The record gives the reactivity of an RNA of 177 nucleotides to 2A3.
Values are in units of 0.01, from 0 to 300, in steps of 10.
The data come from the RNA Mapping Database (RMDB), library OK1LIB.
The RNA was probed in 150 mM KOAc, 10 mM MgCl2 and 150 mM bicine (pH 8.5) at 24 C.
RNA sequence: GGGAACGACUCGAGUAGAGUCGAAAAGGGUGUACAUGAGCAAAGGCAGGAGCGACGGCGCGCAAACGCGCGACUUCGAAGGUCAGUGGCCCACACGCGCUGUCUGCAAGUGUGCGUUCCAGCUGCAGCGGCUAGCACUGUUCGCAGUGCUAGCCGCAAAAGAAACAACAACAACAAC
Reactivity to 2A3 in 0.01 (KOAc 150mM, MgCl2 10mM, bicine 150mM(pH8.5), 24C), signal-to-noise 1, nucleotides 027 to 126: g030g000g000u000g050u060a030c020a010u050g050a100g000c080a020a130a130g030g000c030a020g000g100a100g080c010g000a020c050g000g000c000g030c000g000c020a000a000a170c150g000c060g000c000g060a060c000u110u020c030g030a050a160g140g000u060c120a070g080u090g200g000c000c000c000a000c000a030c040g000c000g000c030u040g050u170c040u030g040c000a080a080g030u000g000u010g000c010g000u000u050c030c030a080g010c040u130g000c010a020